Structure probing data (2A3 and DMS) for a 207-nucleotide construct.
The 2A3 profile rests on 2,568 reads.
The data come from the RNA Mapping Database (RMDB), library M2RFPK.

RNA sequence: GGGAACGACUCGAGUAGAGUCGAAAAAGGUGAUUUCUCCUGCACCUUUAUCAAUGGAGGAACUCGACUUUGCUGUGGGUCCCAAAGAGACCUUAGGUGCAGACAGUUACCGGCGGUGAAGUGUGAGCAUAGGUUCGUGUCUUCGGACACGAACCAACAUCUGUGAUGUCUUCGGACAUCACAGAUGAAAAGAAACAACAACAACAAC
Reactivity to 2A3 in 0.01 (KOAc 150mM, MgCl2 10mM, bicine 150mM(pH8.5), 24C), signal-to-noise 4, nucleotides 027 to 156: a000g020g000u030g000a040u030u050u010c000u000c010c010u120g010c030a020c000c000u090u200u070a060u060c070a050a090u300g030g000a030g020g010a040a020c000u010c010g050a010c030u060u060u080g030c040u060g020u110g010g030g020u030c020c000c040a090a140a020g080a010g020a020c030c010u090u150a040g000g000u020g000c010a020g110a190c030a040g030u060u060a010c010c000g020g000c020g000g000u020g010a030a010g060u100g040u090g110a030g000c060a130u120a160g000g000u000u000c010g000u000g000u020c000u020u080c270g050g000a000c000a000c000g000a000a000c000c010a000a000
Reactivity to DMS in 0.01 (KOAc 150mM, MgCl2 10mM, bicine 150mM(pH8.5), 24C), signal-to-noise 1, nucleotides 027 to 156: a020g040g030u000g000a300u000u000u000c030u010c050c010u020g000c020a050c020c020u010u020u020a110u020c130a060a090u010g020g010a130g020g030a080a080c020u000c010g010a060c060u000u030u000g020c040u000g000u000g000g000g000u000c010c000c040a070a190a180g010a140g010a020c030c020u000u000a120g020g020u000g000c000a160g030a130c100a140g030u000u000a040c040c000g000g000c060g000g010u010g000a050a120g020u000g020u010g000a040g000c120a160u010a040g020g020u000u000c140g070u000g010u000c000u000u000c300g020g000a020c000a000c000g030a000a010c020c000a020a100